[RMDB]
RNA sequence: GGGAACGACUCGAGUAGAGUCGAAAAGAUAUGGACUAUCGGGAGCUAAACUGUCGGAAACGACAGUUUAGCAUCGAUCGAGUAGUCCUAAGUCAAAUCGCUCGGUCAGUUCGCUGACCGAGCGAAAGAAUAAGUAUGCGUUCGCGCAUACUUAUUCAAAAGAAACAACAACAACAAC
Reactivity to DMS in 0.01 (KOAc 150mM, MgCl2 10mM, bicine 150mM(pH8.5), 24C), signal-to-noise 3, nucleotides 027 to 126: g010a020u000a060u000g000g000a010c000u000a030u000c000g000g000g000a020g040c000u000a000a010a000c000u000g010u000c000g020g000a020a010a070c000g010a010c000a000g000u000u000u000a000g020c010a100u000c220g000a060u010c010g000a030g010u000a020g010u000c000c000u010a000a090g000u000c010a110a110a150u010c010g020c000u000c000g000g000u010c000a010g000u000u020c220g020c010u000g010a010c000c000g000a000g010c000g000a000a010a050
Reactivity to 2A3 in 0.01 (KOAc 150mM, MgCl2 10mM, bicine 150mM(pH8.5), 24C), signal-to-noise 2, nucleotides 027 to 126: g000a000u010a000u040g000g000a000c010u000a000u020c000g000g010g010a010g000c000u000a000a010a000c000u000g000u000c000g020g000a030a000a000c000g000a010c000a000g000u000u010u010a000g000c000a010u030c000g010a000u000c010g000a050g300u060a000g000u000c000c000u000a020a000g020u020c000a000a060a250u040c010g020c000u010c030g000g010u000c000a020g010u070u190c240g040c190u000g010a010c010c010g040a000g010c000g000a000a000a000
The record gives the reactivity of an RNA of 177 nucleotides to DMS and 2A3. It was measured as part of the RMDB library TTRDEL. For 2A3 the reverse transcriptase was SuperScript II with manganese.